RNA sequence: GGGAACGACUCGAGUAGAGUCGAAAACAAGAGGAUAUUAUUAAAAUUGCUGCAAAGACUAUUGCUAUGCCUGCUAUGUAAUAUAUCCAGUCAUAGUUGGGCGGCUUUCCAUAGUAGAAUUUGACCGAGGAUACCAGGUAUUCGUACCUGGUAUCCUAAAAGAAACAACAACAACAAC
Reactivity to DMS in 0.01 (KOAc 150mM, MgCl2 10mM, bicine 150mM(pH8.5), 24C), signal-to-noise 2, nucleotides 027 to 126: c110a100a110g000a110g000g000a100u010a000u000u000a050u010u060a040a010a090a160u010u010g000c030u000g000c050a050a010a110g000a170c070u010a110u030u050g000c090u040a030u050g000c000c030u000g070c050u000a020u000g000u020a050a040u020a080u000a000u000c300c040a050g000u000c030a020u020a020g030u020u010g020g000g000c000g000g030c000u010u020u010c050c100a070u030a060g000u000a020g000a060a170u000u000u000g000a060c090c080g000
Reactivity to 2A3 in 0.01 (KOAc 150mM, MgCl2 10mM, bicine 150mM(pH8.5), 24C), signal-to-noise 3, nucleotides 027 to 126: c060a000a070g100a010g100g020a010u030a030u210u100a060u090u210a090a160a140a100u120u160g010c000u020g040c060a140a060a050g090a100c070u050a120u140u130g020c000u040a050u140g020c020c020u010g000c000u000a010u060g030u080a220a040u070a040u020a030u250c070c020a030g040u050c000a010u000a010g000u010u300g030g070g000c010g000g000c000u020u060u040c070c040a110u080a100g000u010a020g050a120a060u010u080u150g160a170c060c080g050